[RMDB]
RNA sequence: GGGAACGACUCGAGUAGAGUCGAAAAGUGAUCACGCGAUCCGAGACCCCGCGUGAUCACGAGUUUAGGGGUCAGGGCAUGUUAUGCUGGCUAUACGUACGCACCCAAGGGCUGCGGGUGCGUACGAAUCUUACGCAGCCCACUGUUGCCAGCUAGAGACUAAUACCUCAUUCGUGAGGUAUUAGUCAAAAGAAACAACAACAACAAC
Reactivity to 2A3 in 0.01 (KOAc 150mM, MgCl2 10mM, bicine 150mM(pH8.5), 24C), signal-to-noise 1, nucleotides 027 to 156: g000u000g010a000u020c000a000c000g030c000g030a080u100c030c030g070a140g020a140c000c020c000c010g000c030g010u000g000a000u000c000a000c010g000a000g000u020u040u100a030g020g070g060g010u000c030a020g050g060g000c030a020u070g050u280u070a090u100g100c020u010g030g010c060u110a020u020a300c010g000u000a000c000g000c000a030c000c000c090a070a130g000g000g000c000u000g000c020g020g000g020u000g000c000g010u000a020c000g000a000a010u030c000u010u080a020c130g020c000a000g000c000c010c000a010c030u030g010u020u000g030c000c030a050g050c090u050a050g010a010